[RMDB]
Conditions: 150 mM KOAc, 10 mM MgCl2 and 150 mM bicine (pH 8.5), 24 C. Structure probing data (DMS and 2A3) for a 207-nucleotide construct. It was measured as part of the RMDB library RNAMAK. The DMS profile rests on 2,627 reads.
RNA sequence: GGGAACGACUCGAGUAGAGUCGAAAAGAUAGAUUCGUCUAUCAAGCCGCCGUAGGUUACGCGAAACCACCAAUCGCUUGGACCGAACUUUCGAAAGAGAGUUCGCUAGCGGAUGGUGGGAGUAACCUAAACGGAAUCUUCUCUAUUCGUAGAGAAAAUGAAGUUUUUAUUUCGAUAAAAACUUCAUAAAAGAAACAACAACAACAAC
Reactivity to DMS in 0.01 (KOAc 150mM, MgCl2 10mM, bicine 150mM(pH8.5), 24C), signal-to-noise 1, nucleotides 027 to 156: g010a030u000a000g040a060u010u010c290g030u000c010u000a000u000c010a120a200g000c020c000g020c000c050g010u000a010g010g020u000u000a010c000g030c050g010a230a190a260c000c000a000c020c000a050a060u000c010g030c000u000u010g140g010a090c300c010g000a020a000c010u000u010u010c000g010a210a160a220g000a040g010a010g010u000u000c000g000c000u000a040g010c000g040g000a060u000g000g000u000g010g010g000a070g010u000a000a000c000c010u000a010a040a080c010g000g000a170a110u010c090u000u000c010u000c010u020a080u000u010c120g030u000a000g000a060g000a000a030a210
Reactivity to 2A3 in 0.01 (KOAc 150mM, MgCl2 10mM, bicine 150mM(pH8.5), 24C), signal-to-noise 2, nucleotides 027 to 156: g000a000u010a000g020a010u030u100c160g040u020c110u010a020u000c040a070a030g110c030c040g020c000c020g010u010a010g000g010u000u000a010c040g010c100g160a140a040a030c000c000a010c000c000a020a080u020c000g000c030u070u140g070g050a130c070c060g000a010a000c000u010u000u010c010g060a090a120a090g000a030g010a000g000u010u010c010g010c020u000a000g010c010g020g000a010u000g000g000u000g000g010g000a000g000u000a010a010c010c000u010a090a060a010c000g000g030a020a040u060c090u060u020c010u000c010u000a050u040u100c150g090u110a030g020a000g000a070a060a050